[RMDB]
RNA sequence: GGGAACGACUCGAGUAGAGUCGAAAAACAAAUACUCACGCUGCUAGGCGGGUGCGCACUGCUGUCUGGGCCGGCGCCGCGCUAGGGCGCACACCUAGCGUUGCAAAGGGUAACCGGGCUGAAAAAACCUCUGCUUAAGAUUCGUCUUAAGCAGAGGAAAAGAAACAACAACAACAAC
Reactivity to DMS in 0.01 (KOAc 150mM, MgCl2 10mM, bicine 150mM(pH8.5), 24C), signal-to-noise 3, nucleotides 027 to 126: a040c090a070a060a100u010a070c020u000c010a130c230g020c050u000g000c060u000a060g020g020c070g000g010g010u000g020c040g020c030a090c070u000g020c030u000g020u010c050u000g020g010g010c010c030g030g000c300g010c020c060g010c040g000c000u010a020g000g010g000c110g010c130a050c150a110c000c000u000a010g000c000g010u010u000g010c020a070a260a150g000g000g000u000a040a140c020c010g000g010g030c020u000g010a010a050a060a080a080a090
Reactivity to 2A3 in 0.01 (KOAc 150mM, MgCl2 10mM, bicine 150mM(pH8.5), 24C), signal-to-noise 1, nucleotides 027 to 126: a010c040a000a110a030u100a030c020u020c000a040c030g070c030u100g030c060u110a050g090g000c010g050g060g010u070g020c040g000c020a080c050u050g020c010u040g030u070c030u020g000g040g020c000c000g020g020c010g000c000c030g000c000g000c010u000a000g010g020g040c150g030c020a040c010a030c040c000u010a020g000c000g010u030u020g020c000a020a040a040g030g000g000u040a080a020c000c020g010g000g000c030u130g050a060a050a030a020a050a040
An RNA of 177 nucleotides, treated with DMS and 2A3 and read out base by base. Source: RMDB library M2PK90, as collected in RNAgym. Values cover nucleotides 27 to 126. The RNA was probed in 150 mM KOAc, 10 mM MgCl2 and 150 mM bicine (pH 8.5) at 24 C.